[RMDB]
RNA sequence: GGGAACGACUCGAGUAGAGUCGAAAAGGUCCCCCAGGAAUGCCUCAGGACCAGUAUUAAUCAAGAACUCCAAGCGCGAUGCGGAAGAGGGCGGCUGCGCAACCUGUACAUGGCAGGUCUUUCGCCAUCGGCGAUGUAGUUUCGACUACAUCGCCGAAAAAGAAACAACAACAACAAC
Reactivity to 2A3 in 0.01 (KOAc 150mM, MgCl2 10mM, bicine 150mM(pH8.5), 24C), signal-to-noise 1, nucleotides 027 to 126: g080g040u040c010c000c000c000c020a040g070g120a130a080u110g020c000c040u010c050a030g000g020a060c000c010a010g020u060a070u300u160a080a120u100c070a130a060g010a040a050c010u000c030c030a130a000g000c000g010c000g070a100u180g010c060g000g040a130a000g000a080g000g000g010c050g020g030c060u090g020c030g000c030a020a050c010c000u040g000u060a070c050a300u010g160g000c000a010g030g030u010c000u010u070u020c030g030c020c010a010
Reactivity to DMS in 0.01 (KOAc 150mM, MgCl2 10mM, bicine 150mM(pH8.5), 24C), signal-to-noise 2, nucleotides 027 to 126: g000g000u000c030c030c030c080c060a070g000g000a170a030u030g000c020c020u010c060a120g020g000a060c050c040a100g030u000a060u000u000a110a080u000c120a100a140g020a050a110c060u000c010c030a100a190g000c060g020c100g010a160u000g040c040g000g010a080a110g000a030g020g010g010c010g000g030c090u000g010c100g020c070a150a070c050c000u000g000u010a120c050a100u000g030g020c020a060g020g000u000c130u000u000u000c030g000c040c060a060